Source information: Structure probing data (DMS) for a 177-nucleotide construct. Source: RMDB library OK2TST, as collected in RNAgym. For DMS, 907 sequencing reads were counted.
RNA sequence: GGGAACGACUCGAGUAGAGUCGAAAACAAUAUGGAUGGCUAUCUUGUAGGAGAGAAGGUCUUUAUCUUGGGCAGUGGUGAUAUCGGGUUGAUUAUGGCAAGGCGCAUGACCUUGGAGGGCGCAAAGUCACAACCGCAAAUUCGUUUGCGGUUGUGAAAAAGAAACAACAACAACAAC
Reactivity to DMS in 0.01 (KOAc 150mM, MgCl2 10mM, bicine 150mM(pH8.5), 24C), signal-to-noise 1, nucleotides 027 to 126: c080a100a040u010a040u000g030g020a010u000g000g030c070u020a070u000c040u000u010g050u000a100g010g010a060g020a050g020a110a180g000g000u000c100u010u000u040a080u020c040u010u020g000g000g030c080a050g000u010g000g000u000g030a050u000a020u020c050g000g010g000u000u000g000a080u000u000a040u020g040g000c070a050a100g000g000c020g010c120a070u010g000a050c060c020u000u000g000g000a150g000g020g000c070g030c080a070a050a100g010